[RMDB]
RNA sequence: GGGAACGACUCGAGUAGAGUCGAAAAGGAUCCUUCGUAGUCAGGAGGGUAACUGCCUCGUGUACAGUUACCAGUGACUAGACAAGGUGUCAUCGUACACGAGGAUGACGUCUUCCAUUAAGGAUCGCUACAUGAUAGUAUUCGUACUGUCAUGUAGAAAAGAAACAACAACAACAAC
Reactivity to 2A3 in 0.01 (KOAc 150mM, MgCl2 10mM, bicine 150mM(pH8.5), 24C), signal-to-noise 9, nucleotides 027 to 126: g020g000a000u000c010c000u020u050c080g120u050a040g040u030c050a020g010g090a050g060g020g000u010a020a020c030u070g040c000c010u040c050g040u050g010u030a030c020a030g010u020u040a030c010c010a010g050u010g050a050c020u030a050g040a100c070a050a050g040g010u030g010u010c010a040u040c040g040u050a010c060a010c040g030a030g040g000a000u020g010a000c030g010u000c000u010u000c010c000a030u060u040a000a000g000g000a000u000c000g000
Reactivity to DMS in 0.01 (KOAc 150mM, MgCl2 10mM, bicine 150mM(pH8.5), 24C), signal-to-noise 9, nucleotides 027 to 126: g000g000a010u000c000c000u000u000c200g020u000a050g010u000c060a100g010g020a130g010g010g010u000a030a070c040u000g010c060c020u000c140g010u000g010u010a140c000a040g010u000u000a020c030c030a160g010u000g010a050c050u000a080g010a120c190a060a060g010g010u000g000u000c020a020u000c040g010u000a040c110a060c150g000a040g000g000a020u000g000a030c110g000u000c010u000u000c040c030a120u000u000a010a020g010g000a010u000c000g000